RNA sequence: GGGAACGACUCGAGUAGAGUCGAAAAUACAAUGUCUUUUAUAAGAAUAGACACCCAGAGUCACGAUUCGUUUUUCGGAUGAAAUAUGCCAGUGAACGUAUAUAUUCCAUUCGUGGAAUCAUACGGUUAUCGUUUAAAGAUUCGUCUUUAAACGAUAAAAAGAAACAACAACAACAAC
Reactivity to 2A3 in 0.01 (KOAc 150mM, MgCl2 10mM, bicine 150mM(pH8.5), 24C), signal-to-noise 9, nucleotides 027 to 126: u150a010c070a020a100u090g010u000c010u030u100u090u080a260u120a210a100g090a110a060u080a060g010a010c010a040c010c010c010a030g030a020g080u050c030a010c100g060a080u070u060c030g100u040u020u030u130u160c030g020g010a020u030g060a040a060a020u210a070u150g060c040c040a060g030u040g110a060a000c010g010u000a020u000a000u010a010u030u000c020c000a010u020u060c180g070u070g010g000a000a010u010c020a010u030a020c010g030g000u010
Reactivity to DMS in 0.01 (KOAc 150mM, MgCl2 10mM, bicine 150mM(pH8.5), 24C), signal-to-noise 9, nucleotides 027 to 126: u020a110c200a090a140u010g010u000c000u000u000u020u020a160u030a120a140g010a080a040u010a030g000a030c030a070c010c000c010a130g000a140g010u010c050a070c060g010a070u010u010c050g010u000u000u000u000u010c070g010g010a030u010g000a060a110a060u040a060u020g010c030c030a120g010u010g000a090a080c020g010u000a000u000a080u010a050u010u000c000c000a030u000u040c140g020u000g000g000a010a010u000c230a040u000a000c020g000g000u010

Structure probing data (2A3 and DMS) for a 177-nucleotide construct. Conditions: 150 mM KOAc, 10 mM MgCl2 and 150 mM bicine (pH 8.5), 24 C. Values cover nucleotides 27 to 126. 2A3 adducts were read by reverse transcription with SuperScript II with manganese. The data come from the RNA Mapping Database (RMDB), libraries RFM100 and RFMREP.